RNA sequence: GGGAACGACUCGAGUAGAGUCGAAAAUCGUCCGGCGGCAUGAACCUUGCCGCCACCGCAGGAAUCGCUACGCAAACCAUGCUGUCCGCCGGUGUGAUCGAGGCCAGCGGCAGCACGAUCACAGCCAAUUACUAUUACCGUUCGCGGUAAUAGUAAUAAAAGAAACAACAACAACAAC
Reactivity to 2A3 in 0.01 (KOAc 150mM, MgCl2 10mM, bicine 150mM(pH8.5), 24C), signal-to-noise 9, nucleotides 027 to 126: u110c040g090u060c040c060g010g000c000g000g010c020a030u070g090a140a180c050c110u020u030g010c000c000g010c000c000a000c000c010g050c040a050g020g090a090a070u090c040g020c040u070a060c040g020c080a040a060a050c030c010a040u060g000c010u030g100u130c010c020g010c020c020g010g010u040g050u070g040a110u130c100g030a110g100g040c000c010a020g010c010g010g000c010a010g010c010a010c010g020a010u060c030a010c020a070g050c020c010a020
Reactivity to DMS in 0.01 (KOAc 150mM, MgCl2 10mM, bicine 150mM(pH8.5), 24C), signal-to-noise 7, nucleotides 027 to 126: u030c090g020u030c050c070g020g010c000g000g030c020a020u010g010a100a100c150c180u020u000g010c010c010g000c010c030a000c060c050g010c050a060g010g000a100a050u010c060g000c030u000a060c100g020c090a060a080a100c090c050a120u010g000c010u000g000u060c010c010g020c030c060g000g000u010g020u020g000a070u010c070g010a120g020g000c000c000a070g010c030g010g000c020a070g010c000a020c090g000a040u010c040a070c090a070g010c050c100a110
An RNA of 177 nucleotides, treated with 2A3 and DMS and read out base by base. The RNA was probed in 150 mM KOAc, 10 mM MgCl2 and 150 mM bicine (pH 8.5) at 24 C. For 2A3 the reverse transcriptase was SuperScript II with manganese. For 2A3, 59,266 sequencing reads were counted.